[RMDB]
RNA sequence: GGGAACGACUCGAGUAGAGUCGAAAAAAGAACUGAAGGAAUUAGAUGAACAAGAAGUUGAACCUAACGAUGACAGACUAGUUCUGGAUGACUUAUUGGGUGAAGACAACUUUAGGCCAGUGUCCCCCCACCGAAGUAAUUUCGAUUACUUCGGUGGAAAAGAAACAACAACAACAAC
Reactivity to 2A3 in 0.01 (KOAc 150mM, MgCl2 10mM, bicine 150mM(pH8.5), 24C), signal-to-noise 1, nucleotides 027 to 126: a030a000g010a050a000c000u010g030a110a010g050g000a020a010u020u000a100g070a170u120g050a100a030c030a080a120g090a090a020g010u010u050g020a050a030c010c010u000a020a020c030g060a040u020g010a010c000a030g140a080c010u050a060g010u100u000c020u020g070g000a100u030g010a020c010u040u090a070u050u080g020g000g000u030g050a050a040g040a020c010a020a040c000u100u020u120a030g040g070c000c040a050g020u050g050u000c000c000c010c000
Reactivity to DMS in 0.01 (KOAc 150mM, MgCl2 10mM, bicine 150mM(pH8.5), 24C), signal-to-noise 2, nucleotides 027 to 126: a060a070g020a100a060c040u010g000a280a170g010g000a070a100u000u000a060g000a190u000g000a080a090c090a060a080g000a070a090g030u000u010g020a130a070c060c010u010a030a010c080g010a120u000g000a070c020a030g000a030c010u010a080g000u000u000c010u000g000g000a080u000g020a110c160u000u000a100u000u000g000g010g010u010g000a100a080g010a140c050a060a090c030u000u000u010a070g000g010c050c010a030g000u000g010u000c010c000c010c280
The record gives the reactivity of an RNA of 177 nucleotides to 2A3 and DMS. The data come from the RNA Mapping Database (RMDB), library OK2TST. DMS adducts were read by reverse transcription with MarathonRT. For 2A3 the reverse transcriptase was SuperScript II with manganese.